The record gives the reactivity of an RNA of 177 nucleotides to DMS and 2A3. It was measured as part of the RMDB library OK2TST. The reactions ran in a buffer of 150 mM KOAc, 10 mM MgCl2 and 150 mM bicine (pH 8.5), at 24 C. For 2A3, 1,428 sequencing reads were counted. High 2A3 reactivity points to a flexible backbone, as in loops and unpaired stretches.
[RMDB]
RNA sequence: GGGAACGACUCGAGUAGAGUCGAAAACACUGCGGAUUUUCGCUUGGACAGAUAACAUAAUGCUGCCAUAGUUGUCCCCGGGCUUGGUUAGGUAGCUAGUGGAGUACGAGUCCAGCGUACACCCUUCGUCGUACUUUGUGUUCGCACAAAGUACGACAAAAGAAACAACAACAACAAC
Reactivity to DMS in 0.01 (KOAc 150mM, MgCl2 10mM, bicine 150mM(pH8.5), 24C), signal-to-noise 1, nucleotides 027 to 126: c070a100c100u000g040c060g000g000a150u000u010u000u000c030g010c020u010u020g020g000a030c020a090g000a230u000a100a060c070a030u010a040a080u040g010c000u010g040c000c000a040u010a050g000u000u000g000u020c020c010c030c020g000g010g000c010u030u030g000g000u000u010a050g010g000u000a010g000c020u000a300g020u000g000g000a300g000u000a020c030g020a300g010u000c020c020a090g000c000g000u000a040c190a070c040c030c020u000u030c130
Reactivity to 2A3 in 0.01 (KOAc 150mM, MgCl2 10mM, bicine 150mM(pH8.5), 24C), signal-to-noise 2, nucleotides 027 to 126: c080a050c050u080g000c080g140g050a130u000u080u060u110c020g000c020u080u190g010g000a000c030a020g050a140u110a170a010c000a020u070a100a010u220g000c000u000g000c040c000a080u030a070g080u070u150g080u160c030c000c000c000g010g040g030c070u080u030g070g040u230u050a100g020g010u020a020g000c000u040a020g030u030g070g030a070g070u060a050c020g010a020g040u000c030c000a000g010c010g030u060a020c070a060c020c010c000u070u140c030